[RMDB]
RNA sequence: GGGAACGACUCGAGUAGAGUCGAAAAUAUCCUACAAUGCACAGGAUAGCCCCCCACAACAAAAAAUUAUCUGUCCCCAAAUGUUAAUUGUAGUUCAGUUGAGAAGCCCUGUUUAGAGUGAGCAGUGUAUUUCCCUUAACCUGCUGAGUAGAAGAGAGCCUAAUCAUUUAUUCGUAAAUGAUUAGGCAAAAGAAACAACAACAACAAC
Reactivity to 2A3 in 0.01 (KOAc 150mM, MgCl2 10mM, bicine 150mM(pH8.5), 24C), signal-to-noise 1, nucleotides 027 to 156: u060a010u020c000c000u010a020c050a010a300u190g080c070a020c070a080g100g000a090u120a290g060c000c000c000c000c000c000a090c000a020a020c060a010a130a020a020a000a000u090u050a090u040c000u080g090u030c050c010c010c040a000a020a170u060g000u060u040a080a100u180u040g030u030a010g010u020u020c070a050g000u020u010g160a030g000a070a010g030c000c010c100u110g030u020u060u010a010g020a010g030u030g000a000g000c050a060g000u020g010u070a080u060u030u000c010c000c040u020u080a010a030c010c020u000g000c020u030g050a000g060u070a010g020a060a000g080a000g020a000
Reactivity to DMS in 0.01 (KOAc 150mM, MgCl2 10mM, bicine 150mM(pH8.5), 24C), signal-to-noise 2, nucleotides 027 to 156: u010a080u000c040c000u020a030c040a080a050u000g010c060a100c100a030g020g020a080u000a070g000c020c020c000c010c010c010a100c110a140a110c020a010a020a050a040a030a080u010u000a020u000c020u010g020u000c010c000c030c040a040a070a130u000g010u010u000a120a090u000u020g030u000a050g000u000u000c040a170g000u000u000g020a140g030a080a110g000c000c020c030u000g010u000u000u000a060g020a100g030u010g000a040g050c020a040g060u010g000u010a060u000u000u010c000c000c000u000u000a060a060c070c000u000g060c030u010g040a110g040u000a100g010a060a110g010a200g000a240
The record gives the reactivity of an RNA of 207 nucleotides to 2A3 and DMS. The reactions ran in a buffer of 150 mM KOAc, 10 mM MgCl2 and 150 mM bicine (pH 8.5), at 24 C. For DMS the reverse transcriptase was MarathonRT. For 2A3, 540 sequencing reads were counted. The DMS profile rests on 3,697 reads. The data come from the RNA Mapping Database (RMDB), library OK3TST. Values cover nucleotides 27 to 156.